The record gives the reactivity of an RNA of 207 nucleotides to 2A3.

RNA sequence: GGGAACGACUCGAGUAGAGUCGAAAAGCAUAUGUAUUCCUAUGUAACAAAGCUUGCUUUCUUAAUACAUGAUCAUUUUGCUAAAGUCAUUUUUGUGCACCUUAAUGAUUGCUUCUUGUUUACAAAUGGUUUUAAUUUAAAGAAAUUAUGUAUGCCAUCCUCAUCCGUGAUUCGUCACGGAUGAGGAAAAAGAAACAACAACAACAAC
Reactivity to 2A3 in 0.01 (KOAc 150mM, MgCl2 10mM, bicine 150mM(pH8.5), 24C), signal-to-noise 1, nucleotides 027 to 156: g040c010a000u050a010u060g080u050a040u130u070c000c000u040a000u020g010u000a000a130c130a140a190a060g070c110u040u040g000c000u000u280u020c020u070u260a200a110u190a060c160a110u100g080a130u050c060a080u010u120u120u090g000c030u100a080a000a000g000u040c010a140u000u000u000u050u300g010u080g120c070a050c050c010u030u060a000a090u150g040a060u050u110g010c000u000u040c000u030u160g010u100u050u000a000c000a040a170a060u020g050g000u070u050u080u080a130a090u300u060u030a130a150a040g040a050a060a000u070u150a010u010g050u010a000u000g010c010c010a000
The reactions ran in a buffer of 150 mM KOAc, 10 mM MgCl2 and 150 mM bicine (pH 8.5), at 24 C. 2A3 adducts were read by reverse transcription with SuperScript II with manganese. For 2A3, 299 sequencing reads were counted.